Description
An RNA of 207 nucleotides, treated with DMS and 2A3 and read out base by base. The RNA was probed in 150 mM KOAc, 10 mM MgCl2 and 150 mM bicine (pH 8.5) at 24 C. 2A3 adducts were read by reverse transcription with SuperScript II with manganese.
[RMDB]
RNA sequence: GGGAACGACUCGAGUAGAGUCGAAAAUCCAGUGGAUGUUCUGUGCUUAGGAGGAAGGCCAGUGCUUGUGGAGAGUUUGAGGCGAUGAGUCAAGGCAAGGGGAGAGGGUGCUGAUUCUUUGUGCUUUAUCAUCUUGUCCUUUCAUUGGAGAGGAAGGGUGAUACAAUGACUUCGGUCAUUGUAUCACAAAAGAAACAACAACAACAAC
Reactivity to DMS in 0.01 (KOAc 150mM, MgCl2 10mM, bicine 150mM(pH8.5), 24C), signal-to-noise 2, nucleotides 027 to 156: u000c020c020a170g000u010g000g020a080u000g020u000u010c060u010g030u010g050c030u010u000a110g020g010a050g000g040a070a100g000g030c020c030a060g060u000g030c080u000u000g000u000g000g010a130g020a090g020u000u000u000g040a130g060g040c070g080a110u010g020a120g000u010c060a040a080g020g000c040a040a050g020g050g020g010a080g020a120g000g000g060u010g020c060u020g000a120u000u010c040u000u010u000g050u000g070c090u000u000u000a120u000c030a030u020c020u010u000g000u000c000c000u010u000u000c000a300u000u010g040g000a080g010a060g000g000a040a050g010g020
Reactivity to 2A3 in 0.01 (KOAc 150mM, MgCl2 10mM, bicine 150mM(pH8.5), 24C), signal-to-noise 6, nucleotides 027 to 156: u030c010c000a030g070u030g080g030a090u070g030u130u020c030u040g050u060g050c030u090u120a060g030g020a030g030g020a100a020g030g020c020c020a030g000u040g060c040u110u130g030u100g060g030a070g000a020g050u070u070u150g070a040g020g020c040g030a050u100g010a040g040u060c080a050a020g040g000c030a040a050g040g000g010g000a030g010a030g010g020g020u030g010c020u030g020a110u070u000c000u040u070u070g030u020g040c020u080u100u070a050u100c020a020u020c020u040u080g100u130c010c000u050u050u030c060a160u110u270g130g030a030g000a000g020g010a020a000g060g020
The 2A3 profile rests on 5,161 reads. It was measured as part of the RMDB library OK3TST. DMS adducts were read by reverse transcription with MarathonRT. Values cover nucleotides 27 to 156. DMS (dimethyl sulfate) methylates the pairing face of unpaired adenines and cytosines.